[RMDB]
RNA sequence: GGGAACGACUCGAGUAGAGUCGAAAACUCAAUGACUUCGGUCAUUGAGAAAGGACAAAAGUCCAAGUGAGCAGCUAUGAGCUCAUACAUCGUCAUAGCAAAAAACACACACGUUCGCGUGUGUGAACCUGUAGGUAGAGUUCGCUCUACCUACAGGAAAAGAAACAACAACAACAAC
Reactivity to 2A3 in 0.01 (KOAc 150mM, MgCl2 10mM, bicine 150mM(pH8.5), 24C), signal-to-noise 3, nucleotides 027 to 126: c000u000c000a010a000u010g000a000c000u020u040c220g100g000u000c000a010u010u000g000a010g010a080a040a000g000g000a020c040a060a300a110a050g010u010c010c010a020a000g200u080g020a010g010c000a000g010c000u010a010u010g000a000g010c010u040c020a040u200a090c080a060u180c210g040u000c010a010u000a010g000c000a050a010a050a040a040a020c020a000c000a000c000a000c000g020u050u060c260g000c000g090u020g000u000g000u010g000a000a050
Reactivity to DMS in 0.01 (KOAc 150mM, MgCl2 10mM, bicine 150mM(pH8.5), 24C), signal-to-noise 2, nucleotides 027 to 126: c000u000c000a010a010u000g010a020c000u000u010c100g060g020u000c000a000u010u000g000a020g000a030a070a070g020g000a030c030a130a090a120a200g000u000c000c000a160a130g000u000g000a000g010c000a210g020c020u000a020u010g000a000g010c000u000c000a140u000a110c180a050u010c150g000u000c010a000u000a000g030c020a010a090a080a110a050a100c000a000c000a010c000a000c000g010u000u010c220g000c000g020u000g010u000g000u000g010a030a070
Background:
Structure probing data (2A3 and DMS) for a 177-nucleotide construct. Source: RMDB library M2PK50, as collected in RNAgym. The reactions ran in a buffer of 150 mM KOAc, 10 mM MgCl2 and 150 mM bicine (pH 8.5), at 24 C. In probing experiments dimethyl sulfate is read out at A N1 and C N3, which are open when not base-paired.